[RMDB]
Structure probing data (DMS and 2A3) for a 177-nucleotide construct.
It was measured as part of the RMDB library VIROID.
Conditions: 150 mM KOAc, 10 mM MgCl2 and 150 mM bicine (pH 8.5), 24 C.
For DMS the reverse transcriptase was MarathonRT.
RNA sequence: GGGAACGACUCGAGUAGAGUCGAAAACACCUCCAGAGGACCCCUUCAGCGAACAGAAGAGCGCUCGGGUGGUAGGAGAAAGACCAUAGCGAUGGGAGGGGAUGCUAGGAGUAGGGAGAGACCGAAGCCUUUUACAACAGUUCGCUGUUGUAAAAGGAAAAGAAACAACAACAACAAC
Reactivity to DMS in 0.01 (KOAc 150mM, MgCl2 10mM, bicine 150mM(pH8.5), 24C), signal-to-noise 1, nucleotides 027 to 126: c090a160c080c000u000c050c010a070g010a200g000g000a150c070c010c030c040u010u010c040a050g010c030g010a030a040c020a120g000a090a060g010a120g020c060g020c010u000c090g010g000g040u000g000g000u000a090g020g020a080g010a020a090a070g000a040c090c060a080u010a090g000c060g000a090u040g030g000g020a040g000g000g000g020a090u000g010c130u000a090g000g010a090g010u000a110g000g020g000a100g000a120g010a120c070c030g000a090a090g000
Reactivity to 2A3 in 0.01 (KOAc 150mM, MgCl2 10mM, bicine 150mM(pH8.5), 24C), signal-to-noise 1, nucleotides 027 to 126: c020a020c010c020u000c040c030a120g000a150g150g070a260c000c000c020c000u000u020c060a010g000c000g050a070a000c030a090g130a160a030g030a090g000c090g000c010u030c040g030g010g000u060g020g020u090a030g010g060a070g080a010a060a000g100a020c020c010a040u110a020g040c060g060a070u080g030g000g010a030g000g010g040g000a000u130g030c010u030a010g050g050a040g000u070a040g030g100g000a050g010a000g020a040c050c020g000a050a000g040